[RMDB]
RNA sequence: GGGAACGACUCGAGUAGAGUCGAAAAGACCUUAACUUCGGUUAAGGUCAAAGACCACUGAGCAGCGAAAGAAACGCUGCAAGCCGCAGUGCACGGCAAUAAAAAGGGUGUUCUUCGGAACACCCAACCACAACUAAUUGUUCGCAAUUAGUUGUGGAAAAGAAACAACAACAACAAC
Reactivity to 2A3 in 0.01 (KOAc 150mM, MgCl2 10mM, bicine 150mM(pH8.5), 24C), signal-to-noise 5, nucleotides 027 to 126: g000a000c000c000u000u010a010a010c000u030u040c150g080g000u000u000a000a000g010g000u000c000a010a010a000g010a020c010c010a020c110u090g060a020g030c010a000g000c000g070a060a200a140g180a150a300a010c020g010c000u010g000c000a000a010g000c010c000g010c040a080g080u060g170c100a040c050g020g000c050a030a030u180a060a060a020a010a030g020g000g000u010g000u010u000c000u020u040c230g060g000a000a000c000a000c010c000c000a000a000
Reactivity to DMS in 0.01 (KOAc 150mM, MgCl2 10mM, bicine 150mM(pH8.5), 24C), signal-to-noise 3, nucleotides 027 to 126: g010a030c000c000u000u000a010a010c000u010u000c200g030g010u000u000a000a000g000g000u000c000a010a070a090g000a290c010c010a270c180u010g000a170g040c000a010g000c010g010a110a130a120g010a130a140a110c010g010c000u000g020c010a060a040g000c010c000g010c020a100g010u000g020c180a130c000g010g000c000a110a090u010a050a080a040a110a080g020g010g010u000g020u000u000c000u000u000c210g020g000a000a010c000a010c000c000c000a000a010